[RMDB]
RNA sequence: GGGAACGACUCGAGUAGAGUCGAAAAUAGUUUGACAUUGUGAAAAGACAUAUCGGGUGUAGAAUAGGUGGGAGCUUCGGCGCCGGUGAAAUACCACUACCUUUAUUGUUUUUUUACUUAUUCAAUGCAUAGUAGAUUGGUUCGCCAAUCUACUAUGAAAAGAAACAACAACAACAAC
Reactivity to DMS in 0.01 (KOAc 150mM, MgCl2 10mM, bicine 150mM(pH8.5), 24C), signal-to-noise 4, nucleotides 027 to 126: u030a080g000u010u000u000g010a050c140a100u010u000g010u000g010a010a020a020a030g010a010c030a010u010a020u000c080g000g000g000u010g000u010a040g000a090a050u000a020g010g020u000g000g000g000a030g020c040u010u030c150g030g010c060g030c240c300g010g000u000g000a020a030a080u000a090c020c010a030c020u000a020c010c010u000u000u010a020u010u010g000u000u000u000u000u000u000u000a040c030u010u000a110u010u000c020a030a040u000g020
Reactivity to 2A3 in 0.01 (KOAc 150mM, MgCl2 10mM, bicine 150mM(pH8.5), 24C), signal-to-noise 6, nucleotides 027 to 126: u120a020g080u030u020u040g060a060c070a060u050u070g010u020g030a020a020a020a000g010a010c010a010u080a010u040c030g000g010g020u150g030u060a050g090a220a080u060a080g090g020u050g030g030g010a080g020c010u050u050c110g080g000c020g020c020c020g020g000u060g030a050a030a020u100a030c010c010a010c010u050a030c000c000u040u060u050a080u080u120g020u010u000u000u000u000u020u010a020c020u060u110a050u100u060c030a010a020u060g040